Background: An RNA of 177 nucleotides, treated with DMS and 2A3 and read out base by base. Conditions: 150 mM KOAc, 10 mM MgCl2 and 150 mM bicine (pH 8.5), 24 C. Source: RMDB library TTRDEL, as collected in RNAgym.

RNA sequence: GGGAACGACUCGAGUAGAGUCGAAAAGAUAUGGAGCGUAGACAUGCUGUCGGAUCGGAAACGAUCCGUCAGCAACAGCUACGCUCCUAAGUCAAAACUGUACCCGUUCUUCGGAACGGGUACAGAAUCUACAUACACACUUCGGUGUGUAUGUAGAAAAAGAAACAACAACAACAAC
Reactivity to DMS in 0.01 (KOAc 150mM, MgCl2 10mM, bicine 150mM(pH8.5), 24C), signal-to-noise 3, nucleotides 027 to 126: g020a030u000a300u010g000g000a000g010c000g000u000a000g020a070c090a140u000g010c000u000g000u000c000g000g010a000u000c000g010g000a090a070a180c000g000a000u000c000c000g000u000c000a000g010c010a000a030c280a090g000c000u000a000c000g000c000u000c000c000u000a050a040g000u010c010a100a120a130a180c000u000g000u000a020c000c000c010g000u000u000c010u000u010c190g010g010a000a000c020g000g000g010u000a000c000a000g000a070a070
Reactivity to 2A3 in 0.01 (KOAc 150mM, MgCl2 10mM, bicine 150mM(pH8.5), 24C), signal-to-noise 1, nucleotides 027 to 126: g000a000u060a030u120g000g000a000g020c010g000u000a000g070a130c060a140u150g000c010u000g010u010c010g000g010a000u010c000g010g030a050a050a050c010g010a000u000c000c000g020u000c000a000g000c010a000a000c000a000g030c000u010a000c000g010c000u000c000c000u000a000a000g000u000c010a000a000a110a160c010u000g010u010a000c010c000c000g000u010u000c020u050u110c270g060g000a000a000c000g030g000g000u000a010c000a000g000a000a000